The record gives the reactivity of an RNA of 177 nucleotides to 2A3 and DMS. It was measured as part of the RMDB library OK1LIB. Reactivities are given for positions 27 through 126. The reactions ran in a buffer of 150 mM KOAc, 10 mM MgCl2 and 150 mM bicine (pH 8.5), at 24 C. For 2A3, 16,799 sequencing reads were counted.
RNA sequence: GGGAACGACUCGAGUAGAGUCGAAAAGCAUUUCUAUUCUAUGUCAUGGUUGAAAAAGAACCUUUCAAAAUUCACUCAGAAUGGAAAUCAUUUGAUAUUAAGAUUGCAGGAGCUGGCGAUGAACGUCGGAUAGAUUAUCUUUCGAGAUAAUCUAUCCAAAAGAAACAACAACAACAAC
Reactivity to 2A3 in 0.01 (KOAc 150mM, MgCl2 10mM, bicine 150mM(pH8.5), 24C), signal-to-noise 9, nucleotides 027 to 126: g040c020a010u010u000u000c000u020a010u020u000c010u020a060u110g070u050c070a100u140g050g020u020u030g090a100a050a010a040a020g110a050a030c000c000u010u040u020c080a110a090a070a120u140u140c030a030c060u110c030a010g010a010a000u010g010g010a010a010a010u030c020a050u030u090u130g090a060u050a070u180u140a120a080g050a120u060u130g060c060a030g000g040a010g020c020u020g020g000c010g040a050u080g070a100a050c030g080u080c060
Reactivity to DMS in 0.01 (KOAc 150mM, MgCl2 10mM, bicine 150mM(pH8.5), 24C), signal-to-noise 5, nucleotides 027 to 126: g020c130a020u010u000u010c000u010a030u020u000c010u000a160u020g000u020c130a050u020g020g000u000u000g010a060a070a030a150a160g000a080a050c130c030u000u020u010c050a050a050a060a100u030u040c160a040c110u020c180a020g000a010a000u010g000g000a010a000a010u020c030a130u010u000u000g000a070u040a080u020u010a070a070g000a080u010u000g000c060a040g000g000a050g000c020u000g010g010c020g010a070u010g000a040a050c100g010u030c160